[RMDB]
RNA sequence: GGGAACGACUCGAGUAGAGUCGAAAAGUGGUGCGCGGAGAGGGUAACCACCGGCGCGCGUCACUGAUAUAUCCACCGGGGGGUAAGGGGAGAAAAGGAUACAGCGCGACGAAGUUAGCACGCUACCGAAAUGUACCCACAUUCGUGUGGGUACAAACAUACGAUCUGAAUUCGUUCAGAUCGUAUGAAAAGAAACAACAACAACAAC
Reactivity to 2A3 in 0.01 (KOAc 150mM, MgCl2 10mM, bicine 150mM(pH8.5), 24C), signal-to-noise 2, nucleotides 027 to 156: g010u000g010g010u020g000c030g010c010g070g080a150g030a080g130g050g010u050a080a080c060c030a050c020c030g050g030c000g000c000g000c000g010u030c000a000c000u000g000a000u050a020u040a060u170c020c040a040c050c040g010g000g000g020g010g000u010a040a080g010g010g060g000a030g010a020a110a020a000g000g010a010u040a130c040a030g020c020g010c030g060a060c060g010a080a010g030u050u060a010g040c030a010c060g010c020u070a060c020c020g000a040a000a060u050g000u000a000c000c040c000a010c010a010u060u120c200g030u070g000u000g010g000g000u000a000c000a000a000a000
Reactivity to DMS in 0.01 (KOAc 150mM, MgCl2 10mM, bicine 150mM(pH8.5), 24C), signal-to-noise 2, nucleotides 027 to 156: g050u000g020g040u000g010c010g020c000g030g010a170g010a130g010g010g000u000a070a110c110c070a090c000c010g000g000c020g020c010g030c010g010u000c010a050c020u000g010a100u010a100u000a070u000c030c010a100c070c010g030g020g010g000g030g010u000a020a080g000g000g050g020a130g020a060a050a080a070g010g010a120u000a080c030a050g000c040g020c020g030a140c040g010a100a120g020u000u000a100g040c000a080c010g010c010u000a120c050c000g000a030a100a100u010g010u000a010c000c010c000a010c000a130u000u020c280g000u000g010u000g020g010g040u000a000c000a000a050a190